[RMDB]
RNA sequence: GGGAACGACUCGAGUAGAGUCGAAAAAGAGGGUAUUAAAGUUUGCUAUGUCCUACACAUGGCACUUUCCAUAGUCAAUAUUCCUUGUGUGAAGCCAUGGAGCAAUACUCAGUUUCAUUCAACCAUGAGGGGAGGAGUAAUUCGUUACUCCUCCCCUAAAAGAAACAACAACAACAAC
Reactivity to DMS in 0.01 (KOAc 150mM, MgCl2 10mM, bicine 150mM(pH8.5), 24C), signal-to-noise 1, nucleotides 027 to 126: a070g020a140g010g040g020u000a000u000u000a040a050a040g000u010u000u000g000c000u000a020u000g000u000c170c130u020a120c220a110c000a030u000g020g010c000a060c050u020u010u000c060c070a030u000a060g000u010c090a000a090u000a120u000u000c000c020u010u000g000u030g010u010g000a060a030g000c040c030a090u000g010g000a030g020c230a060a020u000a050c020u000c030a090g000u010u000u000c010a080u000u010c130a060a100c070c050a080u000g000

The record gives the reactivity of an RNA of 177 nucleotides to DMS. Conditions: 150 mM KOAc, 10 mM MgCl2 and 150 mM bicine (pH 8.5), 24 C. DMS adducts were read by reverse transcription with MarathonRT. For DMS, 943 sequencing reads were counted.